RNA sequence: GGGAACGACUCGAGUAGAGUCGAAAAUGUGGAAGGAAACAAAGGCUGGUGUUAUUGGUUACAUCAUUGACGAGUAGUGACCAGGAGUUAAAAAUAAACUUUGCCUUUAUUUAUCAUUGUAUUAUGCCAUUUCAUUUGUUAAAUUAAGCUUGUAUUAGGAUUUACUGAUAUUCGUAUCAGUAAAUCCAAAAGAAACAACAACAACAAC
Reactivity to DMS in 0.01 (KOAc 150mM, MgCl2 10mM, bicine 150mM(pH8.5), 24C), signal-to-noise 1, nucleotides 027 to 156: u000g050u000g000g030a140a110g000g010a120a100a100c030a040a090a060g050g000c020u000g000g010u000g000u000u000a070u000u000g000g030u000u000a080c080a120u010c030a120u020u000g020a110c100g020a140g020u010a070g010u000g010a050c010c020a110g010g030a120g010u000u020a010a040a080a070a060u000a040a050a050c030u000u010u010g000c050c030u020u010u020a040u040u010u000a060u000c030a050u000u000g010u000a090u000u000a130u000g020c030c030a070u000u000u000c050a110u000u000u000g010u010u000a060a080a130u000u000a090a120g020c000u000u010g020u000a110u000u010a210
Reactivity to 2A3 in 0.01 (KOAc 150mM, MgCl2 10mM, bicine 150mM(pH8.5), 24C), signal-to-noise 4, nucleotides 027 to 156: u130g010u000g020g040a040a050g020g030a060a090a000c040a010a050a030g030g000c030u010g000g070u040g010u090u050a110u060u090g030g000u030u040a020c010a040u060c020a040u030u240g070a050c040g020a010g070u220a000g000u080g000a000c000c000a010g010g020a060g030u100u110a020a070a010a090a070u120a100a040a000c030u100u130u160g000c000c000u050u070u010a090u020u060u050a090u040c030a030u030u110g020u100a060u100u060a040u180g040c020c040a070u060u100u080c020a050u060u120u170g050u050u100a050a150a140u110u080a080a010g010c000u060u100g030u130a130u150u120a060